[RMDB]
RNA sequence: GGGAACGACUCGAGUAGAGUCGAAAACACAUGGAGGAGAUAUCCCACUUGAUAAUCUAUUUAUCUGGGCUCGAUUUCUGGCAGGGAGGCCAAAGAGAAAUUCUAACUUCAUUGUCUUCAGGGAGGGCUAAUCGACGUAGUUCGCUACGUCGAUUAGAAAAGAAACAACAACAACAAC
Reactivity to 2A3 in 0.01 (KOAc 150mM, MgCl2 10mM, bicine 150mM(pH8.5), 24C), signal-to-noise 1, nucleotides 027 to 126: c080a010c040a080u060g060g000a040g050g010a040g000a040u050a050u080c000c000c000a000c010u020u020g010a000u030a070a020u030c150u220a210u070u120u030a030u030c020u020g000g000g030c050u050c060g030a040u030u160u020c020u060g020g000c010a050g000g070g010a010g100g030c000c000a010a120a000g060a000g020a010a080a050u140u000c020u030a030a220c010u060u050c030a020u030u130g020u040c010u030u040c020a020g060g050g010a030g000g030g000
Reactivity to DMS in 0.01 (KOAc 150mM, MgCl2 10mM, bicine 150mM(pH8.5), 24C), signal-to-noise 2, nucleotides 027 to 126: c060a090c170a030u000g010g000a070g020g020a130g010a100u000a070u000c010c010c010a120c280u010u010g000a020u000a030a010u000c220u010a130u020u000u000a020u000c010u000g030g000g000c160u000c070g020a170u000u000u000c050u000g010g000c030a030g010g030g000a060g010g030c000c060a030a040a050g000a030g000a060a040a080u000u000c060u010a050a130c040u000u000c030a010u010u010g000u010c030u010u000c030a100g000g000g030a030g020g000g000